[RMDB]
RNA sequence: GGGAACGACUCGAGUAGAGUCGAAAAGAUAUGGAUCCGUUACAGCGACGAUCGUACAUCAGGUAAGGAUAUGUCGGAAACGACAUAUCCUUAAGCAGUGUACGGGAGCUGAAACGGAUCCUAAGUCCCUUGAAUAAGGGUUCGCCCUUAUUCAAGGAAAAGAAACAACAACAACAAC
Reactivity to 2A3 in 0.01 (KOAc 150mM, MgCl2 10mM, bicine 150mM(pH8.5), 24C), signal-to-noise 3, nucleotides 027 to 126: g020a020u090a050u190g010g010a010u000c000c000g010u000u040a100c020a010g010c020g300a300c020g000a300u010c010g000u010a000c000a040u220c020a060g070g090u030a010a000g000g000a000u000a000u060g020u020c010g040g060a090a060a050c030g010a010c000a000u010a000u000c000c000u000u000a000a000g000c000a010g000u000g020u000a000c000g010g000g000a000g020c010u030g020a020a010a000c000g020g000a000u000c000c000u000a000a000g000u030c020
Reactivity to DMS in 0.01 (KOAc 150mM, MgCl2 10mM, bicine 150mM(pH8.5), 24C), signal-to-noise 6, nucleotides 027 to 126: g010a100u010a260u000g010g010a000u000c000c000g020u000u010a110c010a010g020c010g000a080c300g000a040u020c010g010u000a000c000a010u010c030a300g010g000u000a010a020g000g000a010u000a010u000g010u000c000g010g000a110a090a230c010g000a000c000a010u000a000u000c000c000u000u000a000a000g000c000a300g010u000g000u000a000c000g000g000g000a020g020c000u000g010a050a010a010c000g000g010a010u000c000c010u000a020a120g000u000c050
This 177-nucleotide RNA was probed chemically with 2A3 and DMS. For DMS the reverse transcriptase was MarathonRT. For 2A3, 11,062 sequencing reads were counted. The RNA was probed in 150 mM KOAc, 10 mM MgCl2 and 150 mM bicine (pH 8.5) at 24 C. Reactivities are given for positions 27 through 126. Source: RMDB library TTRINS, as collected in RNAgym.